[RMDB]
RNA sequence: GGGAACGACUCGAGUAGAGUCGAAAAGAUUAAGUGGGAGCGUCGCCCUUUCGGUGCAUCGGAUAUUAAUUAGCCAGUGCGUGGCAUUACGCAUAUUGAUGUCUACUUUGGCGUAGACUUUGCCAAUUUAAGGAUUGUUGGGCAAUCCAGCCCUAGAAUACGAGGUAAAUUUCGAUUUACCUCGUAUAAAAGAAACAACAACAACAAC
Reactivity to DMS in 0.01 (KOAc 150mM, MgCl2 10mM, bicine 150mM(pH8.5), 24C), signal-to-noise 3, nucleotides 027 to 156: g000a170u000u000a040a100g020u010g000g030g000a090g050c050g000u000c050g020c030c000c040u000u000u000c080g030g050u000g000c070a080u000c050g010g020a070u010a050u000u000a060a110u010u000a100g010c020c040a100g010u000g010c010g020u010g020g020c110a080u000u020a040c040g020c060a050u000a120u000u020g020a100u000g020u000c020u010a040c010u000u010u000g010g010c160g030u000a050g020a040c050u000u000u000g020c000c030a030a080u000u010u010a110a140g030g010a130u000u010g000u000u010g010g000g000c050a050a110u010c070c070a170g000c010c000c000u000a060g020a120
Reactivity to 2A3 in 0.01 (KOAc 150mM, MgCl2 10mM, bicine 150mM(pH8.5), 24C), signal-to-noise 3, nucleotides 027 to 156: g060a030u150u140a060a040g030u130g020g030g000a070g030c020g040u040c040g020c020c010c000u050u030u070c090g000g020u050g010c000a040u040c070g040g000a000u010a020u140u140a130a040u080u120a030g020c010c000a020g040u040g030c010g030u030g000g040c060a020u020u150a000c020g000c020a000u060a070u070u100g090a070u070g030u020c010u020a010c010u090u130u060g100g000c050g010u010a010g040a070c000u030u050u070g010c030c000a030a040u060u050u080a150a020g030g040a080u000u100g040u050u050g050g000g010c020a010a010u040c040c020a020g020c000c000c000u010a010g050a030